This 177-nucleotide RNA was probed chemically with DMS and 2A3. Source: RMDB library OK1LIB, as collected in RNAgym. The reactions ran in a buffer of 150 mM KOAc, 10 mM MgCl2 and 150 mM bicine (pH 8.5), at 24 C.
RNA sequence: GGGAACGACUCGAGUAGAGUCGAAAAUUAAAAUUGUUUUUGCAAUACCAUUGUUAUGCACGCCAUAAACAUAGGUAUAAUUGGUGGAAGCCAUACAGAUGAUUAUUACUGCAGCAUAGCAUAUAAGCAUCCUCCUACGGUUCGCCGUAGGAGGAUGAAAAGAAACAACAACAACAAC
Reactivity to DMS in 0.01 (KOAc 150mM, MgCl2 10mM, bicine 150mM(pH8.5), 24C), signal-to-noise 1, nucleotides 027 to 126: u000u050a190a130a090a270u060u000g000u000u030u050u000u020g000c030a010a050u050a110c080c110a260u000u120g020u000u000a000u000g000c020a040c120g000c130c300a130u040a020a000a010c010a000u000a100g000g030u000a000u040a040a140u000u060g040g000u010g000g020a060a050g000c000c000a090u000a070c000a010g000a000u000g000a080u000u000a010u000u080a000c230u010g000c010a120g000c000a000u000a000g000c030a080u000a180u000a110a140g070
Reactivity to 2A3 in 0.01 (KOAc 150mM, MgCl2 10mM, bicine 150mM(pH8.5), 24C), signal-to-noise 3, nucleotides 027 to 126: u150u140a060a000a000a160u030u020g060u030u030u040u060u200g060c020a010a050u060a120c010c050a080u010u010g000u020u000a000u000g000c010a010c210g020c100c020a060u130a070a070a020c020a000u090a110g110g000u060a150u050a300a300u170u040g030g000u040g050g130a130a080g020c000c000a000u020a030c050a010g060a000u000g000a040u010u070a010u020u020a200c110u030g010c000a010g040c040a030u030a070g000c000a020u040a010u050a170a040g020
For 2A3, 1,347 sequencing reads were counted.